[RMDB]
RNA sequence: GGGAACGACUCGAGUAGAGUCGAAAAGCUCGGUGACACCGCGUCUGCCUGGGUCCGAAAGAUUUCUUGUCGCAAAUCUACAAGACAUUGGUUAACGUGUGGGCCGCUUGAGCGGCCGCUCGGCGGGAGUUGGGUGGCGGUUCGCUGCUAUCCAACUAAAAGAAACAACAACAACAAC
Reactivity to 2A3 in 0.01 (KOAc 150mM, MgCl2 10mM, bicine 150mM(pH8.5), 24C), signal-to-noise 8, nucleotides 027 to 126: g010c010u010c010g010g030u040g020a020c020a010c040c010g010c010g020u000c030u040g020c010c010u030g040g000g020u000c000c000g040a070a050a000g010a000u010u020u000c020u040u110g100u070c050g010c090a020a020a060u040c010u020a020c020a050a010g010a000c010a030u020u070g030g000u060u100a030a010c010g000u010g010u100g040g040g000c000c010g000c000u110u180g020a020g010c000g000g010c010c010g000c010u020c010g040g000c010g010g020g010
Reactivity to DMS in 0.01 (KOAc 150mM, MgCl2 10mM, bicine 150mM(pH8.5), 24C), signal-to-noise 8, nucleotides 027 to 126: g000c020u000c030g010g020u010g010a120c100a100c030c020g010c040g000u010c050u000g010c010c010u000g020g010g000u010c010c010g010a120a130a060g010a020u000u000u000c030u020u020g000u020c170g010c180a030a050a060u020c020u010a060c160a110a070g000a030c040a060u000u000g000g010u010u020a090a120c040g000u000g010u010g010g010g020c010c000g010c010u020u030g010a070g020c010g010g000c040c030g000c010u000c020g000g010c020g000g000g010